Structure probing data (DMS) for a 177-nucleotide construct. Reactivities are given for positions 27 through 126. DMS adducts were read by reverse transcription with MarathonRT.
RNA sequence: GGGAACGACUCGAGUAGAGUCGAAAAAAUGGGAAACUGUAUUAAGUCCUAUAUCCUCUGGAUAAUGUACUAGAGAAAACCGAGAAACAUAUCACUUACCCUUGGCAGACUAAGUUUCUCCUAAGGAUGACAAUAGCGUAUUCGUACGCUAUUGUCAAAAAGAAACAACAACAACAAC
Reactivity to DMS in 0.01 (KOAc 150mM, MgCl2 10mM, bicine 150mM(pH8.5), 24C), signal-to-noise 2, nucleotides 027 to 126: a110a100u000g000g000g000a120a040a100c060u000g000u010a150u000u020a070a090g000u010c020c010u010a150u000a070u020c070c010u010c120u050g010g010a070u010a040a070u000g000u000a010c020u010a100g000a090g000a090a050a090a120c110c050g000a020g000a070a040a060c090a050u000a080u000c080a070c070u000u030a070c190c050c020u000u010g000g050c120a040g030a120c090u000a050a090g010u010u000u010c020u010c090c080u010a020a040g000g030a210